[RMDB]
RNA sequence: GGGAACGACUCGAGUAGAGUCGAAAACAUUCAAAAUACUGAGAGACAAGAGGUGAUUGUGAGAGAUAACCAAAACAUGUGACUCUACAAAAUUACAAAUGUUCAUGAGGACUCAGACUGUGGAAUUGAACAUUAACAUAGAAAUGAAUCUGAGAAAUAUAUAGCAUGGGUUCGCCCAUGCUAUAUAAAAAGAAACAACAACAACAAC
Reactivity to 2A3 in 0.01 (KOAc 150mM, MgCl2 10mM, bicine 150mM(pH8.5), 24C), signal-to-noise 3, nucleotides 027 to 156: c020a040u130u130c040a020a050a030a040u110a110c040u080g020a030g000a000g010a070c050a120a020g000a020g040g020u070g060a100u050u100g020u050g070a020g010a000g000a050u040a050a040c020c020a050a010a030a070c050a050u060g050u090g090a040c000u000c010u020a060c020a040a080a050a130u150u060a030c020a060a040a050u060g000u030u030c010a020u070g020a050g040g020a020c010u000c020a010g000a060c020u020g030u110g080g050a060a070u080u020g030a020a010c010a010u060u060a120a000c040a070u220a030g060a010a090a060u070g030a000a050u050c030u020g050a020g020a010a100a060
Reactivity to DMS in 0.01 (KOAc 150mM, MgCl2 10mM, bicine 150mM(pH8.5), 24C), signal-to-noise 2, nucleotides 027 to 156: c100a090u000u010c050a070a120a070a080u000a110c010u100g010a180g000a190g040a080c080a080a100g010a110g070g040u010g010a130u000u000g010u010g000a100g000a090g010a090u000a060a100c060c010a030a060a040a080c090a050u000g040u000g020a060c020u000c020u000a230c030a020a070a050a080u000u020a100c060a030a170a080u000g010u000u000c030a110u000g010a260g010g000a110c050u000c030a040g090a110c040u000g030u000g000g070a080a140u000u010g010a060a040c060a140u010u000a070a140c090a060u010a120g010a060a070a100u000g000a040a090u000c020u010g020a080g000a180a040a230